This 177-nucleotide RNA was probed chemically with 2A3 and DMS. High DMS reactivity at an A or C suggests that its Watson-Crick edge is free. 2A3 adducts were read by reverse transcription with SuperScript II with manganese. DMS adducts were read by reverse transcription with MarathonRT. It was measured as part of the RMDB libraries RFM100 and RFMREP.

RNA sequence: GGGAACGACUCGAGUAGAGUCGAAAAGGCUGGUCACUUCAAGGGUGUAUCGGAUUCUGUGGUGAGCCGCCCACGAAGUUGAACUAGAAAUUUAGCCCACUUUACACAAGAAGGGCGGGCGGAGGCGCCGUCACAUUUAUUUCGAUAAAUGUGACGGAAAAGAAACAACAACAACAAC
Reactivity to 2A3 in 0.01 (KOAc 150mM, MgCl2 10mM, bicine 150mM(pH8.5), 24C), signal-to-noise 9, nucleotides 027 to 126: g060g000c010u010g010g010u000c010a000c010u020u010c050a150a250g030g020g000u080g040u110a180u210c030g040g020a080u140u030c050u130g210u120g120g110u150g020a010g030c000c010g000c000c000c000a020c050g010a010a010g020u120u120g020a050a030c010u000a020g060a030a120a030u140u160u090a030g000c000c010c000a020c010u050u060u130a130c150a020c030a060a060g060a040a080g050g020g020c000g010g020g000c050g010g030a040g010g010c020g000
Reactivity to DMS in 0.01 (KOAc 150mM, MgCl2 10mM, bicine 150mM(pH8.5), 24C), signal-to-noise 9, nucleotides 027 to 126: g000g010c010u000g010g000u000c010a030c010u000u000c030a180a300g000g000g010u000g000u010a060u020c040g010g000a100u020u020c110u020g020u020g010g020u010g000a030g010c100c020g000c010c000c010a070c300g000a020a020g000u010u010g010a050a050c030u010a020g000a060a060a090u020u020u010a120g010c010c000c000a130c080u010u010u010a100c190a100c230a050a050g010a110a070g000g000g010c050g010g000g010c050g000g000a100g010g000c120g010